RNA sequence: GGGAACGACUCGAGUAGAGUCGAAAAAGGGCUGGAUUCGUCCAGCCCUGCACAUUCGUACGCAACGAAGCGUACGUCAUUACGCAAAUGACGUAAAGCGUUGAACCACGGACUUCGGUCCGUGGAAGAGGUUUAAACGAUUCGUCGUUUAAACCUCAAAAGAAACAACAACAACAAC
Reactivity to DMS in 0.01 (KOAc 150mM, MgCl2 10mM, bicine 150mM(pH8.5), 24C), signal-to-noise 4, nucleotides 027 to 126: a010g000g000g030c000u000g020g000a020u000u010c220g000u000c000c000a000g010c000c000c000u000g000c110a090c150a210u010u000c030g030u000a090c120g010c030a060a060c100g000a090a090g000c110g000u010a000c010g020u000c030a010u000u000a070c270g010c210a110a030a020u010g000a030c030g010u000a020a040a150g000c030g020u000u010g000a120a190c010c000a010c000g010g000a000c000u000u010c190g020g010u000c000c000g000u000g000g000a020a030
Reactivity to 2A3 in 0.01 (KOAc 150mM, MgCl2 10mM, bicine 150mM(pH8.5), 24C), signal-to-noise 3, nucleotides 027 to 126: a000g000g010g010c000u000g010g000a020u050u050c140g030u010c050c000a000g010c010c000c000u000g000c010a020c010a100u070u080c020g060u110a030c040g040c050a090a070c070g160a110a030g080c020g050u010a000c010g000u020c000a010u000u110a050c110g000c160a070a090a080u060g030a020c010g020u040a020a030a090g040c020g030u030u090g060a050a040c010c000a000c010g010g000a000c010u040u070c190g070g010u000c010c000g000u010g000g000a000a020